[RMDB]
RNA sequence: GGGAACGACUCGAGUAGAGUCGAAAAUCUGAACGCGCAACGCGAGAGUGUUUAAUGUCACCAAUAAUGGCAACACUCAAGUCUUCAAAUGGUUUUUUCGUCUCACGGCGAAUAGUGAGCAUAUCGACCAUUAGCUACGUUUCGACGUAGCUAAUGGAAAAGAAACAACAACAACAAC
Reactivity to DMS in 0.01 (KOAc 150mM, MgCl2 10mM, bicine 150mM(pH8.5), 24C), signal-to-noise 5, nucleotides 027 to 126: u000c030u000g010a110a110c130g030c070g010c170a090a100c120g000c030g010a270g000a030g010u000g010u010u000u020a020a040u000g020u000c010a020c030c050a070a070u020a090a300u000g000g010c010a020a020c020a010c010u010c000a120a120g010u010c080u000u010c110a060a070a140u010g020g020u000u000u000u000u000u000c080g000u010c010u000c090a060c140g020g000c050g000a020a050u010a060g020u010g010a100g010c090a070u010a060u010c100g020a210
Reactivity to 2A3 in 0.01 (KOAc 150mM, MgCl2 10mM, bicine 150mM(pH8.5), 24C), signal-to-noise 4, nucleotides 027 to 126: u020c030u050g070a100a020c030g020c020g000c110a070a100c080g030c020g040a040g000a010g070u050g070u000u040u210a100a050u040g000u010c020a010c050c050a120a070u240a150a060u070g010g000c000a010a010c010a000c000u010c020a030a020g040u000c050u120u070c070a050a080a160u080g030g090u030u040u000u000u070u090c060g020u020c010u010c020a030c050g080g000c040g100a050a020u050a080g060u060g020a010g000c040a040u060a040u130c040g060a050
The data come from the RNA Mapping Database (RMDB), library OK2TST. The record gives the reactivity of an RNA of 177 nucleotides to DMS and 2A3. The RNA was probed in 150 mM KOAc, 10 mM MgCl2 and 150 mM bicine (pH 8.5) at 24 C. For DMS, 3,850 sequencing reads were counted. 2A3 adducts were read by reverse transcription with SuperScript II with manganese. Reactivities are given for positions 27 through 126.